[RMDB]
RNA sequence: GGGAACGACUCGAGUAGAGUCGAAAAGAGCCGCGCGCUGCGCGUUGGGCCCUGUACAGCUCGCGCGAAUUGACCCUAGGAGGCCGCCACGCGCCCGAGUUUUGCGUUCGUCGCUGGUCGUCGGGCGGGAAUAUAGUCACUUCGGUGACUAUAUUCCAAAAGAAACAACAACAACAAC
Reactivity to DMS in 0.01 (KOAc 150mM, MgCl2 10mM, bicine 150mM(pH8.5), 24C), signal-to-noise 4, nucleotides 027 to 126: g000a140g020c050c030g000c040g020c070g010c040u000g020c040g020c040g020u020u030g000g010g020c020c030c030u010g000u010a130c140a140g010c010u000c030g020c030g000c090g030a070a100u020u020g000a150c030c000c030u010a090g010g000a110g020g010c000c010g010c050c040a080c080g030c050g000c030c020c010g030a070g000u010u020u030u000g010c000g030u000u030c120g010u020c040g010c010u030g000g010u020c010g010u000c040g020g010g010c030g020
Reactivity to 2A3 in 0.01 (KOAc 150mM, MgCl2 10mM, bicine 150mM(pH8.5), 24C), signal-to-noise 6, nucleotides 027 to 126: g090a020g040c030c020g020c010g010c010g010c060u090g010c040g010c010g030u080u220g010g020g000c020c010c020u050g090u120a070c050a040g000c020u020c020g010c000g010c010g050a040a050u080u120g070a120c000c010c000u020a050g020g060a040g080g000c000c020g000c010c010a030c030g050c000g010c000c010c010g030a040g010u070u110u160u110g030c020g020u020u110c120g090u110c020g040c030u070g090g020u080c060g050u010c010g030g010g000c020g000